[RMDB]
RNA sequence: GGGAACGACUCGAGUAGAGUCGAAAACCCAGGGACCAGUGCGCACGCCUGGGCCGCCCUCCGGGAGUCACCCAGCGGCCGCGGACAACUGAAUAAACACCCCAAAGCGCUGCGGUCGGUCAAGGGCAUCGCCAUUAUACUUCGGUAUAAUGGCGAUAAAAGAAACAACAACAACAAC
Reactivity to DMS in 0.01 (KOAc 150mM, MgCl2 10mM, bicine 150mM(pH8.5), 24C), signal-to-noise 4, nucleotides 027 to 126: c000c000c010a120g020g010g000a030c010c020a050g020u020g030c020g000c170a080c150g000c030c000u000g010g000g000c000c010g000c050c010c010u010c050c110g040g010g000a150g010u030c100a150c010c000c000a200g010c000g000g000c000c010g000c050g000g010a050c030a140a120c150u040g010a120a140u030a110a090a100c120a200c060c000c000c020a070a090a130g000c120g020c000u020g000c020g000g000u000c010g000g000u000c060a070a060g020g010g030c130
Reactivity to 2A3 in 0.01 (KOAc 150mM, MgCl2 10mM, bicine 150mM(pH8.5), 24C), signal-to-noise 5, nucleotides 027 to 126: c010c000c000a010g020g020g000a050c020c020a040g030u050g270c060g010c060a060c130g000c010c000u020g000g000g000c010c000g010c000c000c000u050c040c030g000g040g010a100g080u070c050a080c030c010c000a000g020c000g020g000c000c010g000c000g020g020a010c020a110a080c140u170g070a040a050u170a150a110a000c050a110c010c010c000c010a030a100a030g190c240g000c040u010g000c010g020g010u000c000g000g020u110c050a080a110g020g000g010c010